[RMDB]
RNA sequence: GGGAACGACUCGAGUAGAGUCGAAAAGAUAUGGAUCGUAUGUGGAGACUGAGAACCUUAACUACGGUUCGGAAACGAACCGUAGUUAAGGUUCUCAAGGUCGUUGAAACAUGACGAUCCUAAGUCAGUUACUGUGAAAGUUCGCUUUCACAGUAACAAAAGAAACAACAACAACAAC
Reactivity to DMS in 0.01 (KOAc 150mM, MgCl2 10mM, bicine 150mM(pH8.5), 24C), signal-to-noise 2, nucleotides 027 to 126: g010a090u010a300u000g000g000a020u010c000g000u010a040u000g020u000g000g010a170g010a050c000u000g000a010g000a010a000c000c000u020u010a000a000c010u000a000c010g020g010u000u000c000g030g000a080a090a220c010g010a010a000c010c020g010u010a000g010u000u000a000a010g010g030u000u000c000u000c000a030a030g030g020u000c020g000u010u010g020a280a190a030c020a010u000g010a000c010g010a010u000c000c010u010a030a090g000u010c030a140